[RMDB]
RNA sequence: GGGAACGACUCGAGUAGAGUCGAAAAGAUAUGGAUCUCCUCGUCCUGGAGUACCUGGCUCGGAAACGAGCCAGUACUGUGAAGGGACGAGGGAGAUCCUAAGUCAAAACGGUUCUUCGGAACCGAAGCUUGUUCUAUGGUUCGCCAUAGAACAAGCAAAAGAAACAACAACAACAAC
Reactivity to 2A3 in 0.01 (KOAc 150mM, MgCl2 10mM, bicine 150mM(pH8.5), 24C), signal-to-noise 1, nucleotides 027 to 126: g030a020u070a040u210g000g000a000u020c020u000c000c000u000c020g010u000c010c000u030g030g090a050g020u040a050c080c260u030g030g030c000u000c000g030g050a090a150a100c030g030a020g000c000c010a000g000u000a000c000u150g300u040g220a030a020g020g000g010a010c020g000a060g000g020g010a000g000a000u000c000c000u000a010a000g080u000c020a030a020a100a100c000g000g020u000u020c000u040u140c200g110g000a010a010c000c010g000a030a020
Reactivity to DMS in 0.01 (KOAc 150mM, MgCl2 10mM, bicine 150mM(pH8.5), 24C), signal-to-noise 2, nucleotides 027 to 126: g010a060u000a300u000g020g010a030u000c000u000c010c000u000c000g000u010c000c000u010g010g000a020g050u000a000c270c090u000g010g030c000u000c000g010g010a070a080a300c010g010a020g010c000c000a010g000u000a000c020u000g000u020g020a170a220g000g000g000a000c000g010a000g010g010g000a000g010a000u030c000c000u000a000a120g000u000c010a080a100a110a200c030g000g000u000u000c000u000u010c170g010g000a010a010c000c000g010a020a080